Source: RMDB library RFMREP, as collected in RNAgym.
Chemical mapping of a 177-nucleotide RNA with DMS and 2A3.
DMS adducts were read by reverse transcription with MarathonRT.
RNA sequence: GGGAACGACUCGAGUAGAGUCGAAAACAUUGAGCUGCUAAGCACGAAGCAGUAAGUGGUUAUGUAUAUAGCGACUUUAGGAAUUGUUGCAGGCUGAGAACGAGCGACUAAACGGUUUGGAGGAUAAGGUAAAAUGAAUGUUCGCAUUCAUUUUACCAAAAGAAACAACAACAACAAC
Reactivity to DMS in 0.01 (KOAc 150mM, MgCl2 10mM, bicine 150mM(pH8.5), 24C), signal-to-noise 4, nucleotides 027 to 126: c060a120u010u000g010a150g030c000u000g000c010u010a100a170g020c060a060c110g010a120a020g010c030a040g020u000a060a030g020u000g010g010u000u000a020u000g010u000a070u010a050u000a030g000c020g000a020c020u000u010u000a100g010g010a090a080u000u010g010u010u000g010c030a080g000g020c050u000g000a120g000a050a060c090g010a060g000c040g000a080c080u000a050a060a090c100g010g010u000u000u000g020g010a060g000g000a110u000a060a130
Reactivity to 2A3 in 0.01 (KOAc 150mM, MgCl2 10mM, bicine 150mM(pH8.5), 24C), signal-to-noise 2, nucleotides 027 to 126: c010a030u060u170g030a020g040c000u010g000c010u070a110a000g050c000a040c080g030a040a010g000c030a000g070u050a030a010g020u030g050g010u060u020a030u060g160u020a080u030a010u020a300g010c060g060a010c000u030u040u140a060g040g090a100a060u130u080g070u080u080g000c020a030g030g050c020u030g030a020g000a100a010c020g010a010g050c010g050a030c030u110a030a000a130c040g010g040u040u040u070g060g030a050g070g010a040u080a170a110